[RMDB]
RNA sequence: GGGAACGACUCGAGUAGAGUCGAAAAGAAAACUCACCGCAACGAAACGAAAACAAUCGUUCAGAAAUACUUGACCACGAGGGUUCCCUAUAGUCCGCGUUGGCGGUGCUGCAACCCCGUGCGAUAGCUUGCACGGUCUUUUCGAAGACCGUGCAAGAAAAGAAACAACAACAACAAC
Reactivity to 2A3 in 0.01 (KOAc 150mM, MgCl2 10mM, bicine 150mM(pH8.5), 24C), signal-to-noise 3, nucleotides 027 to 126: g020a020a100a020a010c070u050c040a080c000c050g010c070a080a070c050g040a130a020a010c010g020a070a000a090a090c100a050a180u020c030g020u050u000c010a070g160a010a110a020u220a060c020u040u020g000a010c000c010a000c000g030a170g020g000g000u010u040c030c020c000u020a040u070a070g040u070c030c030g020c050g120u080u090g170g010c000g030g020u050g030c000u050g000c000a050a110c020c000c010c000g000u000g000c000g010a000u000a000g000
Reactivity to DMS in 0.01 (KOAc 150mM, MgCl2 10mM, bicine 150mM(pH8.5), 24C), signal-to-noise 3, nucleotides 027 to 126: g020a070a110a110a140c110u000c060a060c110c040g000c050a130a040c110g000a030a090a030c080g000a020a040a100a170c300a230a090u000c020g110u000u010c120a120g020a250a060a020u060a210c020u000u000g000a300c300c030a020c000g000a030g000g020g010u000u000c030c030c010u000a170u000a040g000u020c000c010g010c000g010u070u030g000g040c020g010g010u020g000c080u000g000c160a070a130c000c030c000c000g070u010g000c000g010a000u010a030g000